[RMDB]
RNA sequence: GGGAACGACUCGAGUAGAGUCGAAAAGGGUGACAUCCCAGGAGCGGCACUGCCUGCAGCAGAGGUGCGAGGUUGGGCACGUGGCCCUGAGGGGAUGGCAUGAGGGCAGGGUAGCGGGCAGGAGAGGCACAUACAGGGUCUUCGGACCCUGUAUGUGAAAAGAAACAACAACAACAAC
Reactivity to DMS in 0.01 (KOAc 150mM, MgCl2 10mM, bicine 150mM(pH8.5), 24C), signal-to-noise 1, nucleotides 027 to 126: g020g000g020u020g000a090c070a000u010c010c040c000a150g010g010a050g020c170g020g010c040a060c010u000g010c000c010u000g050c030a170g020c040a040g010a100g000g010u010g000c090g000a100g000g040u000u000g010g020g000c020a060c280g030u000g010g000c020c000c030u020g010a230g010g000g000g000a050u000g020g020c110a060u000g010a090g000g000g000c180a080g000g080g010u010a070g000c060g010g000g000c130a010g010g000a030g010a150g010g030
Reactivity to 2A3 in 0.01 (KOAc 150mM, MgCl2 10mM, bicine 150mM(pH8.5), 24C), signal-to-noise 1, nucleotides 027 to 126: g040g030g030u080g030a060c050a020u010c010c000c020a000g130g080a070g040c090g000g020c000a000c020u050g010c000c000u130g060c030a000g000c000a010g120a080g120g130u080g010c040g060a120g160g010u260u120g030g020g050c010a010c170g070u080g210g040c000c010c000u020g030a110g040g000g020g030a040u050g030g000c010a010u170g050a080g010g030g020c070a080g000g030g000u010a030g050c060g000g000g030c040a010g020g040a100g000a020g080g030
The data come from the RNA Mapping Database (RMDB), library OK2TRN. This 177-nucleotide RNA was probed chemically with DMS and 2A3. The reactions ran in a buffer of 150 mM KOAc, 10 mM MgCl2 and 150 mM bicine (pH 8.5), at 24 C. For 2A3, 1,107 sequencing reads were counted.